[RMDB]
RNA sequence: GGGAACGACUCGAGUAGAGUCGAAAAGCUUCCUCUUGGCGCGGAGGUUUAACUGCGCUCGCUCCCCAUAACGGUGUGGGCGCACCGGAUUUACAAAUUAAAGUCCUUUAGGGAGCGGAAAGGGACAAAAACUUGCACGUGUUCGCACGUGCAAGAACAAUCCAUGAUAGUUCGCUAUCAUGGAUUGAAAAGAAACAACAACAACAAC
Reactivity to DMS in 0.01 (KOAc 150mM, MgCl2 10mM, bicine 150mM(pH8.5), 24C), signal-to-noise 2, nucleotides 027 to 156: g010c080u010u000c010c000u010c020u000u020g020g000c010g040c070g030g010a110g060g030u000u000u010a100a150c020u010g010c000g000c010u000c000g020c000u000c030c010c000c040a150u000a100a070c010g000g020u000g010u010g030g040g000c090g020c000a000c000c000g020g020a180u000u000u010a300c130a100a090a160u000u010a100a050a070g000u010c000c010u000u000u000a060g000g000g000a010g050c000g020g000a030a040a060g020g020g020a080c040a080a100a090a160a140c000u000u000g000c010a000c000g070u000g020u000u000c300g040c000a010c000g010u000g010c000a010a010g000a050a110
Reactivity to 2A3 in 0.01 (KOAc 150mM, MgCl2 10mM, bicine 150mM(pH8.5), 24C), signal-to-noise 5, nucleotides 027 to 156: g030c040u160u050c000c000u000c010u000u000g010g010c000g000c000g010g000a000g030g030u060u160u100a040a020c050u060g010c000g010c000u000c000g000c000u010c000c000c010c030a100u110a170a020c020g000g000u000g000u010g020g080g020c030g000c010a000c000c000g020g020a020u100u190u200a180c180a040a030a000u150u180a090a080a010g000u000c000c000u010u020u050a010g000g010g000a000g010c020g000g000a050a010a000g030g020g020a020c070a030a070a030a030a060c010u010u000g000c000a000c000g000u010g030u090u070c230g010c090a000c000g000u000g000c000a000a000g000a000a000

Source: RMDB library M2RFPK, as collected in RNAgym. This 207-nucleotide RNA was probed chemically with DMS and 2A3. For 2A3 the reverse transcriptase was SuperScript II with manganese. The 2A3 profile rests on 5,230 reads.